About this RNA:
Source: RMDB library OK2TST, as collected in RNAgym. The record gives the reactivity of an RNA of 177 nucleotides to DMS and 2A3.
RNA sequence: GGGAACGACUCGAGUAGAGUCGAAAACGAACACAUGGAUGAACUGGUCACCGGCGGCGUGGCCCAGGUAGUCGUUGAUGGCCUUGAGGCGGUCCAAGUCGAGAAAUAGCGCCGCGACCGGGCCAGGGAUUAGUGCGAGUUUCGACUCGCACUAAUCAAAAGAAACAACAACAACAAC
Reactivity to DMS in 0.01 (KOAc 150mM, MgCl2 10mM, bicine 150mM(pH8.5), 24C), signal-to-noise 2, nucleotides 027 to 126: c080g010a080a090c140a100c210a080u040g040g020a070u010g000a230a150c050u000g000g000u000c040a110c060c030g060g010c000g000g010c010g050u000g000g020c000c000c000a030g000g040u000a150g040u010c060g000u000u010g000a180u000g000g000c000c010u010u020g010a200g020g000c040g030g000u010c070c070a070a170g020u020c100g010a130g010a010a060a090u000a150g000c040g030c000c000g020c080g000a130c070c090g000g010g000c000c030a010g000g020
Reactivity to 2A3 in 0.01 (KOAc 150mM, MgCl2 10mM, bicine 150mM(pH8.5), 24C), signal-to-noise 2, nucleotides 027 to 126: c010g000a070a000c070a030c000a090u160g100g040a130u100g100a160a140c000u020g020g000u030c050a030c140c030g040g000c010g000g010c040g030u030g050g020c000c000c000a000g060g040u070a050g060u030c070g080u130u140g150a150u170g070g000c030c000u070u080g130a220g020g000c030g020g080u140c030c000a130a070g100u100c070g040a060g070a270a070a010u130a090g010c000g000c000c000g010c030g030a040c030c090g000g070g010c020c000a000g000g030
For DMS, 962 sequencing reads were counted. For DMS the reverse transcriptase was MarathonRT.